[RMDB]
RNA sequence: GGGAACGACUCGAGUAGAGUCGAAAAAGAGCCGACGAACCUUCCAACCUUCCAUCCUUCCAACCUUCCAACCUUCCAACCUUCCAAUCUACUCGAGAGGAGGAGGAGGAGGAGGAGGAGGACAUAAGUAUAGAGACGUGUUCGCACGUCUCUAUACAAAAGAAACAACAACAACAAC
Reactivity to DMS in 0.01 (KOAc 150mM, MgCl2 10mM, bicine 150mM(pH8.5), 24C), signal-to-noise 1, nucleotides 027 to 126: a180g000a130g000c000c050g010a090c000g000a100a050c100c050u000u000c060c100a080a160c070c040u010u040c070c010a110u000c020c040u000u000c000c030a090a050c030c040u000u000c020c080a100a210c080c050u000u000c000c010a040a100c050c010u000u020c070c020a110a150u000c000u000a030c040u010c070g000a040g000a140g000g000a100g000g000a150g000g030a090g030g000a180g000g030a190g030g030a130g030g020a100g000g010a300c200a090u000a040a120
Reactivity to 2A3 in 0.01 (KOAc 150mM, MgCl2 10mM, bicine 150mM(pH8.5), 24C), signal-to-noise 1, nucleotides 027 to 126: a000g110a000g070c020c030g020a040c040g030a050a050c000c000u030u000c030c020a100a100c050c010u070u000c020c010a060u000c010c020u080u000c000c040a110a080c050c000u030u000c000c030a100a120c000c010u090u000c030c010a080a070c040c000u080u080c020c010a040a040u040c000u060a130c030u030c050g010a040g000a000g050g070a020g010g060a050g000g020a040g020g060a050g010g040a010g050g030a010g040g020a000g000g000a000c010a070u230a110a060
An RNA of 177 nucleotides, treated with DMS and 2A3 and read out base by base.
The 2A3 profile rests on 1,450 reads.
Values cover nucleotides 27 to 126.